[RMDB]
RNA sequence: GGGAACGACUCGAGUAGAGUCGAAAAGAUAUGGAGUAAGCGAAUGGGAGGCUUGUGCUCGGAAACGAGCAAAGCCGAAGAACACAUGUGCUUACUCCUAAGUCAAAGUUUCUCUUCGGAGAAACAACAGUUGGAUAGUGUUCGCACUAUCCAACUGAAAAGAAACAACAACAACAAC
Reactivity to 2A3 in 0.01 (KOAc 150mM, MgCl2 10mM, bicine 150mM(pH8.5), 24C), signal-to-noise 1, nucleotides 027 to 126: g060a010u030a020u090g000g020a010g010u010a010a020g030c010g040a090a050u100g080g300g160a260g110g010c010u170u100g290u080g210c000u010c030g000g020a080a030a010c010g000a000g000c000a010a010a000g010c000c000g000a000a030g030a060a070c160a000c000a070u040g030u090g050c000u000u010a010c010u030c010c000u000a010a000g000u010c020a200a000a000g000u010u000u020c010u000c000u000u030c300g190g010a010g010a010a020a010c000a020a010
Reactivity to DMS in 0.01 (KOAc 150mM, MgCl2 10mM, bicine 150mM(pH8.5), 24C), signal-to-noise 2, nucleotides 027 to 126: g000a020u000a080u000g000g000a020g000u000a000a010g020c000g020a080a040u010g010g010g020a150g020g020c000u000u000g000u000g020c000u010c000g020g000a010a040a040c000g010a020g020c010a020a020a010g010c000c010g000a060a090g010a140a200c210a050c010a020u010g010u010g000c000u000u000a000c010u000c000c000u000a000a050g010u000c030a100a110a100g000u010u000u000c000u000c000u010u020c140g030g000a000g000a010a000a000c020a120a140
Annotation: Structure probing data (2A3 and DMS) for a 177-nucleotide construct. The 2A3 profile rests on 2,658 reads. The DMS profile rests on 2,444 reads. For 2A3 the reverse transcriptase was SuperScript II with manganese. Source: RMDB library TTRDEL, as collected in RNAgym.